[RMDB]
RNA sequence: GGGAACGACUCGAGUAGAGUCGAAAACAUCGUGGCGGUGAAUCCUGCGAACAGUGCGUCGGUGUAUCCGCCGAGCUCUGUGAACGUCGUGUGGAAACCCUCGGCCCCGGCGUGAUGCACCUCGUCCAACGCUACACGGAUUCGUCCGUGUAGCGUUAAAAGAAACAACAACAACAAC
Reactivity to 2A3 in 0.01 (KOAc 150mM, MgCl2 10mM, bicine 150mM(pH8.5), 24C), signal-to-noise 1, nucleotides 027 to 126: c040a030u080c030g100u090g070g010c080g020g010u080g070a120a120u100c000c000u030g000c020g020a050a010c020a090g040u020g100c030g190u090c050g000g000u030g000u060a120u050c040c000g000c000c000g000a000g000c030u080c030u110g110u080g070a070a010c070g060u070c000g010u040g040u070g090g080a060a180a110c030c000c030u000c000g040g020c000c000c000c030g010g000c000g020u080g000a010u030g000c000a010c010c010u010c040g030u000c020c010
Reactivity to DMS in 0.01 (KOAc 150mM, MgCl2 10mM, bicine 150mM(pH8.5), 24C), signal-to-noise 2, nucleotides 027 to 126: c070a110u000c080g010u010g010g020c050g030g000u000g000a080a090u010c030c020u000g010c040g010a080a060c080a120g020u000g000c020g000u000c150g020g030u000g010u000a090u000c120c040g020c020c000g000a050g010c050u020c070u000g000u000g020a130a070c120g000u000c020g000u030g030u000g020g020a070a040a170c070c040c000u000c060g000g000c070c000c020c020g020g000c000g000u010g000a050u000g010c050a020c040c020u010c050g010u000c060c100